[RMDB]
RNA sequence: GGGAACGACUCGAGUAGAGUCGAAAAAGAUGAAUGACGAACUUGCUGAAGUGUGUCGUAAUUCAGAUGAAUUAUGUACAGUUUUCGUAUGCGAAAAACUUACAGAAGAAUCUCGUGGUGAGUUCACGCUCCAACAAGGGUUCGCCCUUGUUGGAGCAAAAGAAACAACAACAACAAC
Reactivity to 2A3 in 0.01 (KOAc 150mM, MgCl2 10mM, bicine 150mM(pH8.5), 24C), signal-to-noise 2, nucleotides 027 to 126: a000g120a070u160g040a050a120u110g030a070c060g000a020a000c010u070u010g000c000u000g030a090a050g030u110g000u000g010u100c030g000u000a010a030u010u060c050a080g160a300u250g010a220a010u010u000a000u030g040u050a030c010a080g000u030u000u000u050c010g020u060a210u160g100c050g090a000a000a000a000a040c020u020u030a050c030a000g060a040a030g010a060a160u040c040u040c040g060u070g000g090u040g050a120g030u010u020c010a010c060
Reactivity to DMS in 0.01 (KOAc 150mM, MgCl2 10mM, bicine 150mM(pH8.5), 24C), signal-to-noise 1, nucleotides 027 to 126: a160g000a120u000g000a040a050u000g000a070c040g000a070a020c020u000u000g020c030u000g020a060a030g020u000g020u040g020u000c030g000u000a020a000u010u000c010a200g000a100u000g010a020a010u000u000a010u000g020u030a020c080a070g000u000u010u000u000c010g020u000a130u030g010c010g000a020a020a030a060a050c000u000u000a120c010a060g000a050a040g020a170a090u000c060u000c090g000u020g000g010u000g000a140g020u010u010c030a120c170